[RMDB]
RNA sequence: GGGAACGACUCGAGUAGAGUCGAAAACACACCCCCAGGCCGCGGGCCGGCUGCUCUUCUUUCUCUUUCGUCGUCAUCCUUGGCUAACCGCUCAAGUUCCUCCUCUUCCUCUCGGCUGAGGUGCUUCAAACAUUGGCGUUCGCGCCAAUGAAAAGAAACAACAACAACAAC
Reactivity to DMS in 0.01 (KOAc 150mM, MgCl2 10mM, bicine 150mM(pH8.5), 24C), signal-to-noise 8, nucleotides 027 to 129: c090a150c160a240c040c000c000c020c000a140g000g010c050c000g030c150g020g030g020c030c020g010g010c070u010g000c030u030c070u000u000c020u010u030u030c000u020c040u010u010u040c050g020u010c040g000u020c040a110u020c060c000u040u000g010g000c000u020a110a060c080c050g000c060u030c080a070a080g030u010u020c000c000u000c060c030u000c050u050u020c020c010u030c010u030c080g000g080c050u040g020a120g000g030u020g000c050u030u050c080a070a080a170
Reactivity to 2A3 in 0.01 (KOAc 150mM, MgCl2 10mM, bicine 150mM(pH8.5), 24C), signal-to-noise 4, nucleotides 027 to 129: c050a010c020a040c020c000c000c000c020a030g050g020c010c000g060c060g030g050g010c010c010g010g000c030u030g000c000u010c000u060u020c000u010u120u010c010u000c000u040u120u060c020g030u000c000g030u010c020a080u090c040c000u040u030g000g000c020u040a050a080c030c020g040c030u060c080a040a050g020u020u030c000c000u010c000c010u040c010u050u020c000c000u010c000u000c040g010g010c020u030g020a030g010g050u040g010c000u060u070c000a030a050a060